Chemical mapping of a 207-nucleotide RNA with 2A3 and DMS.
[RMDB]
RNA sequence: GGGAACGACUCGAGUAGAGUCGAAAAUGGUGGCCAAGACCAUGGAAACAAACAGAGAAGAACUCUAUGAUCUCUUGGAAACCCUGAGGAGACUUUCUGUCACCUCCAAGGUGAAGUUCAUCGUCUUCAAUCCGUCCUUUGUAUACAUGGAUCGAUAAUUUUAAUACUGGUUCGCCAGUAUUAAAAUAAAAGAAACAACAACAACAAC
Reactivity to 2A3 in 0.01 (KOAc 150mM, MgCl2 10mM, bicine 150mM(pH8.5), 24C), signal-to-noise 4, nucleotides 027 to 156: u130g010g010u040g020g030c040c020a020a000g030a020c060c030a010u010g020g050a000a160a030c050a030a080a010c030a020g160a010g050a270a010g010a120a010c030u020c020u050a060u060g060a100u040c020u010c000u050u020g030g000a090a090a090c020c020c050u060g030a010g030g010a020g000a010c020u110u120u020c070u150g240u030c000a020c000c010u030c150c090a130a050g010g000u020g030a010a010g020u070u090c030a050u090c060g010u010c000u020u000c040a040a090u010c020c020g060u060c030c040u100u130u080g100u110a150u040a140c060a050u070g050g020a030u090c010g040a020u190a170
Reactivity to DMS in 0.01 (KOAc 150mM, MgCl2 10mM, bicine 150mM(pH8.5), 24C), signal-to-noise 3, nucleotides 027 to 156: u010g000g010u000g000g010c020c060a050a130g000a050c010c000a050u020g020g000a210a160a160c090a090a090a170c070a120g020a180g010a160a170g020a090a110c070u000c010u000a030u010g000a060u000c000u000c030u010u000g020g010a170a160a100c020c020c070u000g000a080g010g020a150g010a060c020u000u000u010c150u030g000u000c020a060c020c000u020c050c080a020a080g020g000u000g000a060a120g030u000u000c020a060u000c070g010u000c030u000u000c040a060a130u000c030c050g010u000c040c030u000u000u000g010u000a170u000a150c030a080u000g000g000a210u000c040g000a110u000a060

For 2A3, 1,750 sequencing reads were counted. The DMS profile rests on 5,180 reads. The data come from the RNA Mapping Database (RMDB), library OK3TST.